[RMDB]
RNA sequence: GGGAACGACUCGAGUAGAGUCGAAAACACAGGCGACUUAAUCGGAGAGCGGUUACACGCGAGGAACAUGAAAUUAUUACAUCAGUAGACUCGAGAUUACUACAACUUGCGUUGCUAUCUCAAAUAAACUAGUUGCCUUGUUCGCAAGGCAACUAGUAAAAGAAACAACAACAACAAC
Reactivity to 2A3 in 0.01 (KOAc 150mM, MgCl2 10mM, bicine 150mM(pH8.5), 24C), signal-to-noise 1, nucleotides 027 to 126: c080a000c060a040g030g060c050g010a080c030u110u090a020a010u080c010g040g010a050g000a000g040c010g040g010u040u140a050c020a000c070g050c010g000a020g010g000a010a050c060a080u110g100a070a080a050u230u250a170u050u100a100c010a030u050c030a060g110u030a000g050a020c030u000c040g040a080g010a120u080u120a100c040u050a030c030a080a040c000u000u050g000c010g090u040u080g040c000u010a010u040c020u000c000a060a070a180u140a080a160
Reactivity to DMS in 0.01 (KOAc 150mM, MgCl2 10mM, bicine 150mM(pH8.5), 24C), signal-to-noise 1, nucleotides 027 to 126: c110a040c160a160g000g010c080g000a040c190u000u010a060a150u030c040g010g010a100g000a050g000c050g030g010u000u010a090c200a090c030g020c070g000a070g010g000a100a060c170a010u010g000a010a140a120u000u000a100u000u010a080c190a040u000c050a080g000u000a060g030a080c020u000c130g010a060g010a100u000u000a010c040u020a070c060a060a080c020u000u000g000c080g000u000u000g000c060u000a070u000c010u010c010a050a050a080u000a070a100